[RMDB]
RNA sequence: GGGAACGACUCGAGUAGAGUCGAAAAGAUAUGGAGCACUGGGAGAAUAACGUCGGAAACGACGUCGAUUCGAGGAUCAGUGACCCUCCUAAGUCAAAAUCUUUAGCUUGUUCGCAAGCUAAAGAAACAGGAUGUAAUGGUUCGCCAUUACAUCCUGAAAAGAAACAACAACAACAAC
Reactivity to DMS in 0.01 (KOAc 150mM, MgCl2 10mM, bicine 150mM(pH8.5), 24C), signal-to-noise 4, nucleotides 027 to 126: g020a010u000a000u020g010g000a010g010c010a020c010u010g000g000g010a010g010a020a010u000a170a020c000g010u000c000g000g000a000a000a020c000g010a010c000g010u010c150g010a040u000u000c000g010a150g020g010a100u010c010a010g000u000g000a130c250c200c040u000c000c010u000a010a140g000u000c010a090a050a120a120u000c000u000u000u000a000g000c000u000u000g010u000u000c220g020c010a010a000g010c000u000a000a000a000g000a020a070a180
Reactivity to 2A3 in 0.01 (KOAc 150mM, MgCl2 10mM, bicine 150mM(pH8.5), 24C), signal-to-noise 2, nucleotides 027 to 126: g000a000u010a000u050g010g010a000g000c010a000c000u000g020g000g010a030g020a010a010u030a050a000c000g000u010c000g010g000a010a000a000c000g000a000c000g010u000c020g070a060u000u020c040g130a300g020g020a000u000c000a000g010u060g030a130c060c010c000u010c000c000u000a010a000g010u010c040a000a060a040a260u010c000u000u010u010a010g000c010u030u010g030u120u090c300g040c170a000a000g000c000u010a010a000a010g000a030a020a010